[RMDB]
RNA sequence: GGGAACGACUCGAGUAGAGUCGAAAACUUUGUUUUGAUUAAUCAUAGAAUUACCUCUCUAUUAAGCUACGUAUGCGUAGGCGCUGUAGUUGGUGUCAUAGAUAGCGUCAUGCAGUGCCAUCUGUGAUGGCAUGCCAUGAUUCGUCAUGGCAUGCCAAAAAGAAACAACAACAACAAC
Reactivity to 2A3 in 0.01 (KOAc 150mM, MgCl2 10mM, bicine 150mM(pH8.5), 24C), signal-to-noise 2, nucleotides 027 to 126: c000u100u070u120g040u000u020u030u090g090a070u080u110a050a020u060c010a040u040a060g060a070a040u120u040a080c020c000u010c000u000c010u030a070u080u130a190a020g030c010u030a020c060g080u080a030u110g070c010g050u040a130g040g010c000g000c000u010g030u020a070g090u050u050g010g000u010g070u070c070a120u080a230g130a070u090a050g060c020g030u030c010a020u020g000c000a010g000u000g000c010c000a000u000c000u010g100u030g030a010
Reactivity to DMS in 0.01 (KOAc 150mM, MgCl2 10mM, bicine 150mM(pH8.5), 24C), signal-to-noise 4, nucleotides 027 to 126: c060u000u000u010g010u000u020u000u000g000a200u010u000a120a100u000c040a030u000a030g000a080a080u000u010a080c080c060u000c080u000c040u000a090u010u010a080a100g010c040u000a050c080g020u000a050u010g000c050g020u000a110g000g000c020g010c030u010g030u000a020g010u000u000g010g020u000g010u000c040a110u000a110g020a080u000a080g000c030g010u010c020a050u000g010c060a030g000u000g010c000c010a080u000c030u010g010u000g010a100